[RMDB]
RNA sequence: GGGAACGACUCGAGUAGAGUCGAAAAAUAACGGAAUGAUGACGCCAUCAGAAGAAACAACGCCUGCAGAUGAAACAUGCCUGAAAGCAGCCAGAGCUGCGAUUGAUGUUAACAAUGUCGCCUUCCGUCAUGACAUCAGUUUCGACUGAUGUCAUGAAAAAGAAACAACAACAACAAC
Reactivity to 2A3 in 0.01 (KOAc 150mM, MgCl2 10mM, bicine 150mM(pH8.5), 24C), signal-to-noise 3, nucleotides 027 to 126: a000u050a030a040c040g000g020a030a010u080g100a080u060g010a030c020g050c080c000a000u020c010a030g120a210a020g030a050a170a000c020a010a070c070g080c020c020u010g000c030a040g030a190u050g070a140a020a010c020a050u060g030c000c010u070g080a080a050a000g000c010a000g000c020c030a100g020a020g040c000u030g010c030g020a020u030u070g040a030u040g000u040u030a030a070c090a080a060u120g010u000c030g000c000c000u000u020c010c010g040
Reactivity to DMS in 0.01 (KOAc 150mM, MgCl2 10mM, bicine 150mM(pH8.5), 24C), signal-to-noise 3, nucleotides 027 to 126: a070u010a070a150c030g020g010a080a070u010g020a070u000g030a060c020g010c160c020a020u000c030a060g010a060a080g000a120a080a060c060a060a070c150g010c090c050u000g010c040a050g000a070u000g000a120a080a100c050a020u000g020c060c040u000g000a060a070a130g000c030a030g000c020c120a120g030a100g000c010u000g000c040g000a050u010u000g000a050u000g000u000u000a050a060c180a050a050u000g010u000c020g010c030c030u000u000c010c010g030